RNA sequence: GGGAACGACUCGAGUAGAGUCGAAAAUGAAAUAAAGCGUACGAACAACCACGUACGCAAACAGAAAAGCGGACCUACGAGCGCACAGCGCUCAGGUAUGAGCGCAAAACAUAGGAAUUGAAAAAAAUCCUCUACGUUAGUUCGCUAACGUAGAGGAAAAAGAAACAACAACAACAAC
Reactivity to DMS in 0.01 (KOAc 150mM, MgCl2 10mM, bicine 150mM(pH8.5), 24C), signal-to-noise 1, nucleotides 027 to 126: u010g000a160a130a160u010a060a170a120g030c010g020u010a000c000g000a120a010c030a070a140c250c130a070c000g070u000a000c000g030c000a060a110a120c130a060g000a050a020a150a090g000c010g000g010a000c000c000u000a070c210g010a200g000c020g050c100a040c160a160g020c010g030c000u000c020a030g010g030u030a010u000g010a030g010c010g030c030a000a070a040a000c050a030u000a010g040g000a090a080u010u000g010a020a000a000a050a050a120a150